[RMDB]
RNA sequence: GGGAACGACUCGAGUAGAGUCGAAAAUAGCUGACGUUCGCGUCAGCUAAAAGCACCAAAACCUCCUGGCGGUGCGCCGCCGGCCCCGCCGGGAAGGCCGCCAACUCGAUGGGUUCGCCCAUCGAAAUCUUAGAUGGAGAUUCGUCUCCAUCUAAGAAAAAGAAACAACAACAACAAC
Reactivity to 2A3 in 0.01 (KOAc 150mM, MgCl2 10mM, bicine 150mM(pH8.5), 24C), signal-to-noise 2, nucleotides 027 to 126: u040a010g000c010u000g000a000c020g030u030u040c300g020c010g070u020c000a000g000c000u000a010a000a000a000g000c020a050c080c000a030a070a110a160c020c020u000c000c000u010g020g020c000g000g010u060g030c080g010c030c010g300c020c060g010g000c000c000c000c000g000c000c000g000g010g020a010a000g000g000c030c020g100c020c010a070a100c060u010c020g000a000u010g010g020g040u020u050c210g040c020c000c000a000u000c000g000a010a010a000
Reactivity to DMS in 0.01 (KOAc 150mM, MgCl2 10mM, bicine 150mM(pH8.5), 24C), signal-to-noise 4, nucleotides 027 to 126: u010a000g000c000u000g000a020c000g040u000u000c180g030c020g020u000c000a000g010c000u000a000a020a060a140g010c180a250c020c020a080a050a100a250c020c030u000c010c000u000g000g000c000g000g010u000g010c140g020c020c020g020c250c190g000g010c010c020c000c020g000c010c000g020g000g000a020a020g020g010c120c080g000c090c100a050a070c180u000c000g010a000u000g000g000g010u000u010c190g030c010c000c000a020u000c000g000a000a050a060
Chemical mapping of a 177-nucleotide RNA with 2A3 and DMS.
For DMS, 3,429 sequencing reads were counted.
The RNA was probed in 150 mM KOAc, 10 mM MgCl2 and 150 mM bicine (pH 8.5) at 24 C.
DMS adducts were read by reverse transcription with MarathonRT.